[RMDB]
RNA sequence: GGGAACGACUCGAGUAGAGUCGAAAAGUUGAGGAACCCCCAGAGGGAGGAAUCCACACGGAGAAAGGAGACAAAUCACCUCCAGAGGACCCCUUCAGCGAACAGAGGAGCGCUUGGCCGUCAGGAGCAGCAUAAAGUACUUCGGUACUUUAUGCUGAAAAGAAACAACAACAACAAC
Reactivity to DMS in 0.01 (KOAc 150mM, MgCl2 10mM, bicine 150mM(pH8.5), 24C), signal-to-noise 1, nucleotides 027 to 126: g000u000u020g020a090g000g020a090a080c050c000c000c000c040a080g020a070g010g020g000a030g000g000a090a080u000c040c040a050c140a220c120g000g020a030g000a080a160a110g000g000a060g000a130c110a100a100a090u000c100a130c100c000u000c000c010a060g000a180g020g000a020c050c030c010c010u000u000c020a040g010c050g040a030a020c110a090g020a070g000g010a030g020c020g020c070u020u000g000g030c000c020g000u000c060a060g000g030a110g020
An RNA of 177 nucleotides, treated with DMS and read out base by base. The DMS profile rests on 603 reads. DMS (dimethyl sulfate) methylates the pairing face of unpaired adenines and cytosines.